[RMDB]
The data come from the RNA Mapping Database (RMDB), libraries RFM100 and RFMREP. An RNA of 177 nucleotides, treated with DMS and 2A3 and read out base by base.
RNA sequence: GGGAACGACUCGAGUAGAGUCGAAAACUUUGGGCACCAGACAUGAAAUUCAACAGCAACCGCCAGUAGAUUAAACCAAUUGAACGUCUGAAGCUGUGGUGCCGGCACAGGAGUCUCUGGUUUCGGGUCCACAUCAUUUUUUCGAAAAUGAUGUGGAAAAAGAAACAACAACAACAAC
Reactivity to DMS in 0.01 (KOAc 150mM, MgCl2 10mM, bicine 150mM(pH8.5), 24C), signal-to-noise 4, nucleotides 027 to 126: c040u000u020u020g020g000g000c000a030c030c000a110g020a110c150a150u020g010a110a110a100u020u030c080a160a140c050a050g000c040a080a170c120c160g010c010c030a030g010u000a080g000a080u000u000a070a090a160c190c080a060a050u020u000g000a120a070c220g020u000c010u000g000a120a190g000c010u000g040u000g010g010u000g000c020c010g000g020c040a110c140a080g000g000a090g010u010c070u000c050u020g010g030u000u000u000c030g000g030g000
Reactivity to 2A3 in 0.01 (KOAc 150mM, MgCl2 10mM, bicine 150mM(pH8.5), 24C), signal-to-noise 5, nucleotides 027 to 126: c000u080u050u070g010g010g000c020a010c020c010a020g110a140c070a080u270g090a040a130a130u220u110c040a040a020c010a020g010c000a030a050c000c030g010c010c010a040g030u050a020g010a050u100u070a110a070a080c060c050a020a060u030u080g050a080a000c050g050u020c040u020g010a070a020g010c010u010g030u040g040g000u020g000c000c000g030g000c040a070c050a030g060g000a030g040u020c020u000c020u050g050g000u020u010u040c030g010g040g040

The RNA was probed in 150 mM KOAc, 10 mM MgCl2 and 150 mM bicine (pH 8.5) at 24 C.